[RMDB]
An RNA of 207 nucleotides, treated with 2A3 and DMS and read out base by base. The 2A3 profile rests on 1,463 reads. Conditions: 150 mM KOAc, 10 mM MgCl2 and 150 mM bicine (pH 8.5), 24 C. The data come from the RNA Mapping Database (RMDB), library OK3TST. For DMS the reverse transcriptase was MarathonRT.

RNA sequence: GGGAACGACUCGAGUAGAGUCGAAAACUGAGAGAGUGCUUUGACAACCCUGUGCUCAUGAUUCAGCGGACUAGAAACAUUCUGAAUGCAGUUAUCAGUUCUUACUAUAGAACUUUCAGUAGUGAAGGAACAGAGAAAACAGUCAAAGCUAAUUUGACAUGACCUUAUGUUUCGACAUAAGGUCAUGAAAAGAAACAACAACAACAAC
Reactivity to 2A3 in 0.01 (KOAc 150mM, MgCl2 10mM, bicine 150mM(pH8.5), 24C), signal-to-noise 3, nucleotides 027 to 156: c070u100g020a020g010a010g000a020g230u090g040c000u060u010u010g030a010c000a030a110c040c010c000u020g010u010g020c010u030c030a140u090g070a100u080u080c040a030g040c050g090g020a050c040u080a090g040a100a160a020c020a100u120u020c020u070g040a030a010u150g070c030a030g020u140u130a100u210c020a010g000u020u010c000u050u090a140c060u050a040u040a210g040a040a040c000u050u110u000c090a100g030u100a010g020u080g100a080a020g050g030a070a000c020a020g030a000g030a140a120a020a010c040a020g030u010c010a010a000a000g020c010u010a040a120u060u060u110g040a040
Reactivity to DMS in 0.01 (KOAc 150mM, MgCl2 10mM, bicine 150mM(pH8.5), 24C), signal-to-noise 2, nucleotides 027 to 156: c070u010g000a170g000a070g010a160g030u010g010c020u000u000u020g030a050c070a100a300c020c000c000u020g000u000g010c040u010c040a150u010g000a180u000u000c050a050g070c060g020g000a270c100u000a130g040a130a140a110c100a080u000u000c020u000g010a040a060u000g030c050a170g000u020u000a110u000c070a060g020u000u000c020u010u010a150c100u000a110u000a090g010a050a080c050u000u000u000c030a140g020u010a060g000u010g010a070a160g020g010a080a030c020a080g000a070g000a040a050a030a020c060a060g000u000c010a020a040a020g010c030u010a060a090u010u010u020g000a260

The DMS profile rests on 3,583 reads.